RNA sequence: GGGAACGACUCGAGUAGAGUCGAAAAGCUCAUGUGGAUUUAGCACUUCACAAAGAAGACAUGUGUAAUGAGCAGCAACAGGAGCCAGCCAAGAUUUCUUCAUUUACUUCACUGAAAGUUUCUCAAGACCUCGAUGUUGCAGUGAUUGUCAGCUCCACAGGAUAUUAGCAUUCGUGCUAAUAUCCUGAAAAGAAACAACAACAACAAC
Reactivity to DMS in 0.01 (KOAc 150mM, MgCl2 10mM, bicine 150mM(pH8.5), 24C), signal-to-noise 3, nucleotides 027 to 156: g010c030u000c020a060u000g030u000g010g000a110u020u000u000a130g030c080a180c070u000u020c040a100c100a080a130a280g000a060a060g000a080c070a090u000g030u000g030u010a210a060u000g010a070g020c010a280g020c060a040a090c040a080g000g020a080g020c030c070a090g020c060c030a050a070g000a120u000u010u000c000u000u000c000a070u000u000u000a060c050u000u000c020a100c090u010g020a080a040a080g010u000u000u000c030u000c080a070a120g020a040c060c030u000c030g000a160u000g020u010u000g020c020a090g030u010g000a080u000u000g000u000c040a100g010c030u000c010c010a270
Reactivity to 2A3 in 0.01 (KOAc 150mM, MgCl2 10mM, bicine 150mM(pH8.5), 24C), signal-to-noise 4, nucleotides 027 to 156: g010c000u020c040a040u070g050u050g040g110a130u090u170u210a080g030c040a060c030u040u060c040a050c090a110a190a050g060a050a030g070a080c080a080u120g030u010g030u170a100a080u050g010a030g040c030a020g020c010a010a040c010a080g020g050a010g020c030c010a010g010c010c050a110a050g050a070u100u120u030c010u060u030c040a070u070u060u130a100c030u050u040c040a010c060u000g040a050a050a020g050u010u120u030c090u010c050a090a090g030a110c020c010u040c040g080a070u110g030u070u010g000c050a040g010u010g080a090u050u050g050u060c040a020g030c040u010c020c020a020